Chemical mapping of a 177-nucleotide RNA with DMS and 2A3. The 2A3 profile rests on 747 reads. Conditions: 150 mM KOAc, 10 mM MgCl2 and 150 mM bicine (pH 8.5), 24 C. 2A3 adducts were read by reverse transcription with SuperScript II with manganese. Source: RMDB library M2PK90, as collected in RNAgym.
RNA sequence: GGGAACGACUCGAGUAGAGUCGAAAAUUAUUGAGCGUAGAUGUCUCUGACACGAUACGAGUAAGUGACUCUCGUGUACUACUGGCGAAUGAGACAGAGACAUUAUAUGCUCGUGCCAGUCAAUAAAGGUCCAAAUUUGAUUCGUCAAAUUUGGACCAAAAGAAACAACAACAACAAC
Reactivity to DMS in 0.01 (KOAc 150mM, MgCl2 10mM, bicine 150mM(pH8.5), 24C), signal-to-noise 1, nucleotides 027 to 126: u000u000a060u010u000g030a010g040c010g050u000a030g010a010u000g000u010c000u010c010u000g010a130c020a070c080g000a130u000a060c100g010a030g040u010a050a060g010u000g010a050c080u000c110u020c050g000u000g020u010a070c070u000a060c040u010g000g000c030g010a080a040u010g010a090g030a260c000a000g000a010g010a010c000a000u000u000a070u000a020u000g000c010u000c000g000u000g010c000c010a170g000u010c100a030a020u010a040a130a130
Reactivity to 2A3 in 0.01 (KOAc 150mM, MgCl2 10mM, bicine 150mM(pH8.5), 24C), signal-to-noise 1, nucleotides 027 to 126: u130u060a090u060u210g010a000g030c000g000u020a010g010a020u010g000u050c000u000c000u010g000a020c000a010c010g070a080u150a180c040g000a010g020u060a140a110g160u070g230a050c010u000c020u020c060g000u000g050u090a160c060u030a040c000u020g130g010c080g060a050a090u100g000a020g010a060c000a010g000a000g000a010c000a000u000u030a150u010a000u220g000c000u000c000g000u020g060c000c020a010g100u210c030a040a070u080a240a140a010